[RMDB]
RNA sequence: GGGAACGACUCGAGUAGAGUCGAAAAGGGUUUGAGCCAUCGCCCGAAUAUGAUGGCUGAUACAAGUCGACAUUGUACGCGACGUAGUACGUACUCAUUAGUGCGAAAGCACGGUUAGUCCGACUCGGCAGGGACGAUCUUCUGUCAAUACUUAGAAAUACUACGCGUCAUUCGUGACGCGUAGUAUAAAAGAAACAACAACAACAAC
Reactivity to 2A3 in 0.01 (KOAc 150mM, MgCl2 10mM, bicine 150mM(pH8.5), 24C), signal-to-noise 3, nucleotides 027 to 156: g020g000g000u040u070u110g070a010g000c000c000a000u020c000g010c000c010c040g040a040a120u160a070u130g010a000u000g000g000c000u000g020a010u080a110c140a200a040g010u030c030g060a050c060a060u130u170g030u080a020c070g040c010g090a020c050g010u010a000g020u010a060c020g000u000a010c000u000c020a020u040u050a080g000u000g010c000g060a140a020a000g020c000a000c040g000g000u020u010a010g000u030c020c010g020a030c020u010c090g000g000c020a010g050g000g050a080c080g090a160u070c050u160u000c000u020g090u030c000a040a130u070a180c040u080u090a090g170a080a130
Reactivity to DMS in 0.01 (KOAc 150mM, MgCl2 10mM, bicine 150mM(pH8.5), 24C), signal-to-noise 2, nucleotides 027 to 156: g000g010g040u000u010u000g020a020g020c010c050a100u000c000g000c030c030c050g010a150a080u030a080u000g000a010u000g040g000c000u020g020a110u000a070c060a070a090g020u000c060g000a050c050a180u020u000g010u000a020c000g020c060g020a120c130g000u000a090g040u000a030c040g020u000a030c050u000c100a110u000u000a100g000u020g010c040g010a150a190a220g030c000a030c010g010g020u020u000a150g000u010c030c010g030a060c030u000c080g000g000c060a180g000g020g000a070c060g000a080u000c110u000u000c060u010g020u000c050a110a070u010a060c100u000u000a080g010a140a090